[RMDB]
RNA sequence: GGGAACGACUCGAGUAGAGUCGAAAAGAUAUGGAUUGUGGGAGCAGCACAUCGGAAACGAUGUGUCUGCGAGGAUCACACUGUCCUAAGUCAAACCUUGUACACACGUUCGCGUGUGUACAAGGAACGUCCUAAUCUGGUUCGCCAGAUUAGGACGAAAAGAAACAACAACAACAAC
Reactivity to DMS in 0.01 (KOAc 150mM, MgCl2 10mM, bicine 150mM(pH8.5), 24C), signal-to-noise 2, nucleotides 027 to 126: g020a020u010a300u000g000g000a030u010u010g040u030g010g020g010a160g000c000a000g000c020a020c010a000u010c030g020g010a060a040a210c000g010a000u000g020u000g020u010c020u000g030c000g000a080g060g020a170u010c040a040c000a030c300u000g000u000c010c010u000a050a150g000u000c030a100a110a190c000c000u000u000g000u000a030c010a000c000a010c010g030u000u020c230g010c040g000u000g010u010g020u000a000c000a000a000g000g010a010a010
Reactivity to 2A3 in 0.01 (KOAc 150mM, MgCl2 10mM, bicine 150mM(pH8.5), 24C), signal-to-noise 1, nucleotides 027 to 126: g000a010u060a010u120g000g000a000u000u070g010u030g010g000g020a050g010c020a000g010c000a010c000a010u000c010g000g020a060a050a020c010g000a010u000g000u010g040u030c020u000g010c060g000a030g040g000a050u040c010a010c000a000c170u070g040u020c000c000u020a120a020g030u000c060a020a010a260c000c000u020u000g000u020a000c000a000c010a010c000g040u080u110c300g010c020g090u020g000u000g010u020a000c010a000a010g000g000a010a010